RNA sequence: GGGAACGACUCGAGUAGAGUCGAAAAAUUGUGCCGUCUGAAGUUAGUAGUGUCAAAUUUUUGCAGGUGGCAACUGUGCAAACAUUAGCAUUUGGAACAAGCAGGUAUGGUGAAACUUUUAAUAGCACAUGAGUUGAUUGUUCGCAAUCAACUCAUGAAAAGAAACAACAACAACAAC
Reactivity to 2A3 in 0.01 (KOAc 150mM, MgCl2 10mM, bicine 150mM(pH8.5), 24C), signal-to-noise 2, nucleotides 027 to 126: a000u100u140g000u060g000c000c000g110u100c020u040g040a050a020g030u010u090a050g020u090a050g000u060g010u040c020a050a090a140u070u130u070u040u080g020c040a040g010g040u030g030g030c040a020a040c020u040g000u060g070c030a070a020a040c020a090u040u060a000g000c020a020u020u030u130g040g000a120a030c040a130a000g020c000a010g070g000u060a050u100g020g010u050g030a070a000a020c010u060u120u090u060a190a130u150a120g050c010a000
Reactivity to DMS in 0.01 (KOAc 150mM, MgCl2 10mM, bicine 150mM(pH8.5), 24C), signal-to-noise 3, nucleotides 027 to 126: a080u000u010g010u010g020c020c030g020u010c040u010g010a090a110g010u000u010a090g010u010a040g040u000g000u000c050a070a050a090u000u000u000u010u000g010c020a200g020g010u000g000g020c210a040a050c050u010g000u000g010c050a020a040a030c120a020u000u000a090g000c030a040u000u000u010g010g000a060a030c080a030a090g010c020a040g000g020u000a050u000g000g010u000g000a110a060a070c040u000u010u010u000a050a120u020a060g020c150a130
This 177-nucleotide RNA was probed chemically with 2A3 and DMS. The RNA was probed in 150 mM KOAc, 10 mM MgCl2 and 150 mM bicine (pH 8.5) at 24 C. For 2A3, 1,322 sequencing reads were counted. Reactivities are rounded to 0.1 and cut off at 0 and 3.